[RMDB]
RNA sequence: GGGAACGACUCGAGUAGAGUCGAAAAGAAAAAGACGUGGAAGUACAGAGUUACGAAAGUAACGAACGGCAAAUGUACUGAAGAGAUGACUGAAUGCCGUAAAAGUCUUCUCUGACACGUCGAAAAAGGGAUUAAAUAGCUUCGGCUAUUUAAUCCCAAAAGAAACAACAACAACAAC
Reactivity to DMS in 0.01 (KOAc 150mM, MgCl2 10mM, bicine 150mM(pH8.5), 24C), signal-to-noise 3, nucleotides 027 to 126: g000a070a070a090a080a100g000a000c000g020u020g040g010a120a020g000u010a000c000a130g000a210g000u030u000a010c000g000a120a080a140g010u000a010a000c000g000a050a040c000g000g000c000a110a050a070u020g000u000a000c000u000g010a170a010g000a000g000a010u000g000a000c000u000g000a080a120u040g000c000c000g010u000a040a060a070a010g000u000c000u010u020c000u000c000u000g030a230c010a000c010g010u000c000g000a010a020a070a130a050
Reactivity to 2A3 in 0.01 (KOAc 150mM, MgCl2 10mM, bicine 150mM(pH8.5), 24C), signal-to-noise 2, nucleotides 027 to 126: g060a020a130a000a010a000g000a000c040g000u020g000g000a060a020g000u000a000c010a020g080a010g020u020u000a010c000g010a120a040a040g000u000a000a000c010g020a140a010c010g000g000c020a030a060a130u050g000u000a000c000u010g000a010a010g010a000g000a000u030g010a000c000u030g070a300a050u190g020c010c000g010u040a070a110a030a020g010u020c000u020u020c000u010c000u000g000a010c010a000c000g020u000c000g010a000a000a000a000a000

Structure probing data (DMS and 2A3) for a 177-nucleotide construct. The RNA was probed in 150 mM KOAc, 10 mM MgCl2 and 150 mM bicine (pH 8.5) at 24 C. DMS adducts were read by reverse transcription with MarathonRT. The 2A3 profile rests on 2,128 reads. The data come from the RNA Mapping Database (RMDB), library OK1LIB.